RNA sequence: GGGAACGACUCGAGUAGAGUCGAAAAGAUAAAUACAUUUGUAACCGAUUCUAAUACAUUACGUCUCAGGCACCUAUUCUAAAGGAACCGAAUAUAGCACACUUGGGUGAUAGACACAAACGUCAAGGACCCCCAUAUGGUUCGCCAUAUGGGGGUCAAAAGAAACAACAACAACAAC
Reactivity to 2A3 in 0.01 (KOAc 150mM, MgCl2 10mM, bicine 150mM(pH8.5), 24C), signal-to-noise 1, nucleotides 027 to 126: g030a000u300a070a080a020u300a020c100a230u210u000u300g000u160a130a180c000c010g040a100u240u000c170u090a000a130u020a270c060a130u110u110a000c000g060u000c060u040c000a000g020g000c000a040c000c030u030a050u080u030c230u150a000a140a130g030g000a000a000c000c000g150a120a000u210a020u170a000g000c000a000c020a020c000u000u150g000g120g060u080g030a000u000a070g000a000c020a000c000a060a040a040c020g090u000c060a000a020g000

The record gives the reactivity of an RNA of 177 nucleotides to 2A3. For 2A3 the reverse transcriptase was SuperScript II with manganese. Source: RMDB library OK1LIB, as collected in RNAgym. Conditions: 150 mM KOAc, 10 mM MgCl2 and 150 mM bicine (pH 8.5), 24 C.